[RMDB]
RNA sequence: GGGAACGACUCGAGUAGAGUCGAAAAGGGGUCUUCCUCUCGAGGCUUUAGACAUGGCUAACUGAAGCCUCCACGGUUAGCCAACAGCUAAAGCUACCCACCGAGAGGUGAAGACGGAGGCACCCAAAAUCGAAGUUUCGUUCGCGAAACUUCGAAACAAAAAUAUGUCCUUCGGGACAUAUUUUUGAAAAGAAACAACAACAACAAC
Reactivity to 2A3 in 0.01 (KOAc 150mM, MgCl2 10mM, bicine 150mM(pH8.5), 24C), signal-to-noise 1, nucleotides 027 to 156: g110g030g040g010u000c010u070u050c010c000u010c000u010c000g000a000g010g000c000u000u020u040a030g020a280c030a030u020g020g020c000u010a000a010c000u010g010a120a000g050c010c000u000c000c000a010c000g020g000u010u010a000g050c090c040a090a110c090a070g300c000u000a020a000a000g000c000u020a030c070c060c010a050c020c020g010a020g000a030g020g040u090g130a010a000g000a000c010g000g000a000g040g020c000a000c000c000c000a030a060a050a080u060c000g000a000a000g000u000u000u000c020g030u040u130c260g000c000g140a000a000a000c010u000u000c000g000a010a010a000
Reactivity to DMS in 0.01 (KOAc 150mM, MgCl2 10mM, bicine 150mM(pH8.5), 24C), signal-to-noise 1, nucleotides 027 to 156: g030g000g040g030u030c000u010u010c010c000u000c010u000c000g040a180g000g000c010u000u000u000a010g030a090c030a300u000g000g000c010u000a010a050c000u010g000a080a130g000c050c000u010c050c040a300c040g010g000u000u000a040g000c000c000a110a020c240a220g050c010u000a000a040a010g040c010u000a000c040c050c010a300c030c000g000a100g000a090g000g080u030g000a000a130g000a050c000g010g060a090g130g060c050a060c010c030c000a130a010a090a140u000c000g030a000a000g010u000u010u000c010g060u010u000c300g000c030g030a060a000a010c000u000u010c000g030a030a050a140